[RMDB]
RNA sequence: GGGAACGACUCGAGUAGAGUCGAAAACCGUAGGUUACUCCCUUGCAUAGUCGAAGAACAAGCGUUCGAAAGAGCGCUUGGGAGACUAUGAACUACAAGUGCGAGUAACCUAAACGGAAAACACAUACAUUGAAUGUUCGCAUUCAAUGUAUGUGAACAAUUCCUAGGGCUUCGGCCCUAGGAAUUGAAAAGAAACAACAACAACAAC
Reactivity to 2A3 in 0.01 (KOAc 150mM, MgCl2 10mM, bicine 150mM(pH8.5), 24C), signal-to-noise 1, nucleotides 027 to 156: c000c000g010u010a010g010g000u010u010a000c000u010c000c000c000u010u000g020c000a000u000a000g000u020c010g230a300a000g010a050a090c010a000a010g000c000g000u000u000c010g020a090a050a000g000a000g000c000g020c000u010u000g000g000g000a040g010a000c000u000a000u020g020a040a030c040u260a010c120a000a020g030u060g130c270g040a010g000u000a000a000c000c000u000a000a000a000c000g000g050a040a050a080a010c000a010c010a030u000a000c000a000u000u000g010a020a000u010g030u070u090c280g050c090a000u000u010c000a020a000u000g000u010a000u000g010u000g000a000a000
Annotation
Chemical mapping of a 207-nucleotide RNA with 2A3. Reactivities are rounded to 0.1 and cut off at 0 and 3.